Structure probing data (DMS and 2A3) for a 177-nucleotide construct. Source: RMDB library RFMREP, as collected in RNAgym. DMS adducts were read by reverse transcription with MarathonRT. For 2A3, 6,526 sequencing reads were counted.
[RMDB]
RNA sequence: GGGAACGACUCGAGUAGAGUCGAAAAGAAGGGCGUCGUGAACACAGUUAAGUGGCUCGUCUGUAGCUCCCGGAGGUGAGUACACCUCUACGUAUAUGGGGCGAUGAGGGGUCAAGAAGACUGGCAUGUAUUAUUGUCUGUUCGCAGACAAUAAUACAAAAGAAACAACAACAACAAC
Reactivity to DMS in 0.01 (KOAc 150mM, MgCl2 10mM, bicine 150mM(pH8.5), 24C), signal-to-noise 8, nucleotides 027 to 126: g010a080a080g010g010g010c020g020u000c010g010u000g010a140a120c070a130c020a040g010u000u000a100a220g020u000g000g000c000u000c020g000u000c010u010g000u010a300g010c010u000c000c000c110g010g000a020g010g020u000g010a300g020u000a120c040a020c000c000u000c010u000a020c230g020u000a090u010a130u010g000g010g000g000c010g010a110u000g000a030g010g000g000g010u000c020a020a060g000a090a180g010a020c020u010g000g010c150a120u000
Reactivity to 2A3 in 0.01 (KOAc 150mM, MgCl2 10mM, bicine 150mM(pH8.5), 24C), signal-to-noise 5, nucleotides 027 to 126: g080a020a090g030g010g000c020g020u030c040g020u050g040a060a010c070a010c010a040g010u040u080a130a070g080u040g020g010c010u000c020g300u000c080u020g100u070a010g000c010u010c020c010c010g000g000a000g030g000u030g030a130g150u160a090c000a000c030c000u000c010u010a030c020g010u010a050u020a070u300g010g000g000g010c010g000a010u040g010a010g010g010g030g000u010c010a010a020g070a060a000g020a010c020u010g040g040c050a060u090